[RMDB]
RNA sequence: GGGAACGACUCGAGUAGAGUCGAAAAGAUAUGGACGGUGUCCAUCCUAUGUCCAAGGGAGGCUGUUAUCGGAAACGAUAACGAAGCCGAAGAACUUGGAGCAUAGGAUGGACACCGUCCUAAGUCAUCGUAUAGAGAUGUUCGCAUCUCUAUACGAAAAAGAAACAACAACAACAAC
Reactivity to DMS in 0.01 (KOAc 150mM, MgCl2 10mM, bicine 150mM(pH8.5), 24C), signal-to-noise 3, nucleotides 027 to 126: g000a040u010a300u010g020g010a020c000g010g000u000g010u000c010c000a000u000c010c010u000a000u000g000u000c000c000a010a000g000g000g000a090g030g050c000u010g000u000u000a020u000c000g000g010a160a100a290c010g010a010u000a000a010c010g020a150a080g030c000c000g000a060a140g000a140a180c000u000u000g000g000a090g010c000a010u010a000g000g000a000u010g000g000a000c000a000c000c000g000u000c000c000u000a000a070g020u000c050a150

Record summary:
The record gives the reactivity of an RNA of 177 nucleotides to DMS. DMS adducts were read by reverse transcription with MarathonRT. Values cover nucleotides 27 to 126. It was measured as part of the RMDB library TTRINS. For DMS, 5,649 sequencing reads were counted. The RNA was probed in 150 mM KOAc, 10 mM MgCl2 and 150 mM bicine (pH 8.5) at 24 C. In probing experiments dimethyl sulfate is read out at A N1 and C N3, which are open when not base-paired.